[RMDB]
RNA sequence: GGGAACGACUCGAGUAGAGUCGAAAAGAUAUGGACGUAUGAUAAGAUACUAGAGCGUUGAAAUCGGAAACGAUGGAGCUCAUAUCGAAACAUACGUCCUAAGUCAAAACGAGCGUUCGCGCUCGAACCUGUAUUUGGUCUUCGGACCAAAUACAGGAAAAGAAACAACAACAACAAC
Reactivity to DMS in 0.01 (KOAc 150mM, MgCl2 10mM, bicine 150mM(pH8.5), 24C), signal-to-noise 1, nucleotides 027 to 126: g000a070u000a300u000g000g000a010c000g000u000a000u000g020a090u010a030a300g000a030u000a000c300u000a120g010a000g010c010g000u010u000g120a100a120a050u000c000g000g000a120a100a190c000g000a020u010g040g000a110g050c000u000c000a180u000a000u000c000g010a050a160a300c000a000u010a030c000g050u000c000c000u030a010a070g010u000c030a050a050a090a190c000g000a000g010c020g000u000u000c240g030c020g000c030u000c000g000a010a070
Reactivity to 2A3 in 0.01 (KOAc 150mM, MgCl2 10mM, bicine 150mM(pH8.5), 24C), signal-to-noise 1, nucleotides 027 to 126: g020a060u070a020u160g020g020a000c010g000u000a000u020g000a030u050a060a000g000a020u020a030c150u300a270g000a000g000c030g170u300u050g070a050a040a000u000c000g030g030a160a030a000c000g010a040u000g000g020a020g000c000u020c020a000u010a020u000c000g020a080a010a000c000a000u010a010c000g000u000c000c000u020a000a000g010u000c000a010a010a030a050c030g000a000g070c010g030u090u160c270g000c010g010c170u000c010g010a010a040

Overview: The data come from the RNA Mapping Database (RMDB), library TTRDEL. The record gives the reactivity of an RNA of 177 nucleotides to DMS and 2A3. For 2A3 the reverse transcriptase was SuperScript II with manganese. The RNA was probed in 150 mM KOAc, 10 mM MgCl2 and 150 mM bicine (pH 8.5) at 24 C.